[RMDB]
RNA sequence: GGGAACGACUCGAGUAGAGUCGAAAACAAAGCAGCGAUCAUUAGACUGGAAAACUAAUGAUCAAAAGGUAACCACUAAAAUCCCGAAAGGGUGGGCUGUGGUUACCUUCCAGACUCUAAUGACAAACUCGAUGGUUGUGUUCGCACAACCAUCGAGAAAAGAAACAACAACAACAAC
Reactivity to 2A3 in 0.01 (KOAc 150mM, MgCl2 10mM, bicine 150mM(pH8.5), 24C), signal-to-noise 1, nucleotides 027 to 126: c030a000a080a000g110c080a000g060c070g020a110u000c000a000u000u000a000g010a010c030u070g060g000a060a080a000a000c060u110a110a270u210g080a070u190c020a000a070a000a000g000g000u000a000a000c000c000a000c020u040a030a030a000a020u070c000c000c000g000a050a060a000g020g000g000u000g020g020g000c100u040g040u000g000g000u000u000a000c000c000u000u000c000c000a000g000a000c000u020c000u060a010a030u030g040a050c040a020a030a010

The record gives the reactivity of an RNA of 177 nucleotides to 2A3. The RNA was probed in 150 mM KOAc, 10 mM MgCl2 and 150 mM bicine (pH 8.5) at 24 C. The data come from the RNA Mapping Database (RMDB), library OK1LIB.